The record gives the reactivity of an RNA of 177 nucleotides to DMS.
[RMDB]
RNA sequence: GGGAACGACUCGAGUAGAGUCGAAAACGCUGACGAGGCCAAGAAGUGGGCUGCCAAGGCGAAGAAGGAAGCGGCGACGGUGGCGUCCCUGUGUGAAGACGCGGAAUUUGAGGCGGCGGCAAUGGAGGACAUUAACCCCUUUCGAGGGGUUAAUGUCAAAAGAAACAACAACAACAAC
Reactivity to DMS in 0.01 (KOAc 150mM, MgCl2 10mM, bicine 150mM(pH8.5), 24C), signal-to-noise 1, nucleotides 027 to 126: c080g040c010u010g010a100c140g000a110g000g000c000c020a050a110g020a110a140g020u000g000g010g000c060u000g030c060c030a050a160g030g010c050g000a080a110g040a080a070g000g000a060a080g030c050g000g010c020g050a050c130g000g070u010g030g000c030g000u000c020c030c050u010g030u000g010u000g040a150a080g010a080c080g010c050g050g000a050a120u000u010u020g010a130g010g010c030g010g030c080g060g010c050a060a030u020g000g000a120g000
Values cover nucleotides 27 to 126. The data come from the RNA Mapping Database (RMDB), library OK2TST. The DMS profile rests on 1,042 reads.